[RMDB]
The data come from the RNA Mapping Database (RMDB), library TTRDES. Chemical mapping of a 177-nucleotide RNA with 2A3 and DMS. For DMS the reverse transcriptase was MarathonRT. Reactivities are given for positions 27 through 126. The 2A3 profile rests on 4,861 reads. Conditions: 150 mM KOAc, 10 mM MgCl2 and 150 mM bicine (pH 8.5), 24 C.
RNA sequence: GGGAACGACUCGAGUAGAGUCGAAAAGAUAUGGACGAUGCUCGACAUGCUCAGACUCGGAAACGAGUUGGGAGCAACAGCGAGUCAUCGUCCUAAGUCAAAACUCCGCAGCUUCGGCUGCGGAGAACUACAGAAACGAGUUCGCUCGUUUCUGUAGAAAAGAAACAACAACAACAAC
Reactivity to 2A3 in 0.01 (KOAc 150mM, MgCl2 10mM, bicine 150mM(pH8.5), 24C), signal-to-noise 3, nucleotides 027 to 126: g000a000u040a020u080g000g000a000c010g000a000u020g020c010u010c030g150a230c110a250u280g000c030u040c010a010g020a020c000u000c000g010g020a030a040a020c010g010a020g020u000u040g190g300g020a000g030c020a110a070c080a090g120c040g000a000g030u180c020a000u010c000g000u000c000c000u010a000a000g000u000c020a020a060a100a230c010u000c010c000g000c000a000g000c000u130u230c300g210g020c000u010g000c000g010g010a000g000a000a000
Reactivity to DMS in 0.01 (KOAc 150mM, MgCl2 10mM, bicine 150mM(pH8.5), 24C), signal-to-noise 3, nucleotides 027 to 126: g000a050u000a230u000g010g010a020c010g020a010u000g010c020u000c000g030a060c130a190u000g000c020u020c000a300g000a010c000u000c010g000g000a040a050a130c010g000a010g000u000u010g000g060g010a030g010c010a040a030c280a120g000c010g000a020g020u020c010a000u000c000g010u000c000c000u000a010a070g020u000c030a100a100a150a170c010u010c000c000g010c010a000g010c000u010u010c290g030g000c010u000g000c000g010g010a000g000a000a120